The data come from the RNA Mapping Database (RMDB), library M2RFPK. Structure probing data (2A3) for a 207-nucleotide construct.
RNA sequence: GGGAACGACUCGAGUAGAGUCGAAAAGGGCCGUUCACUGGAUCCUAAGCCUCUAGAAGGAUAAUAUAGGCACUCCAUACCCUACUCCGACUCAAUACGUCCCCGUCGUACAGAAUGGUAACAUAUCGAACACAACCUAACUUCGGUUAGGUUGUAACUUUCAGUGGGGAUUCGUCCCCACUGAAAGAAAAGAAACAACAACAACAAC
Reactivity to 2A3 in 0.01 (KOAc 150mM, MgCl2 10mM, bicine 150mM(pH8.5), 24C), signal-to-noise 1, nucleotides 027 to 156: g020g020g030c180c140g160u120u110c100a070c120u060g000g000a100u300c000c000u020a000a000g030c040c000u020c080u110a170g050a280a070g120g040a130u120a290a100u240a190u040a110g010g000c030a010c000u000c000c010a040u030a020c000c000c020u050a030c120u070c080c000g000a030c010u010c000a100a060u050a110c000g020u000c070c020c020c020g040u030c030g050u040a080c060a030g170a130a110u040g010g020u100a150a000c020a010u070a090u150c050g080a120a000c010a000c000a020a000c000c020u000a000a000c000u020u070c120g040g020u000u000a000g010g000u000u000g000u000a000a000
Conditions: 150 mM KOAc, 10 mM MgCl2 and 150 mM bicine (pH 8.5), 24 C.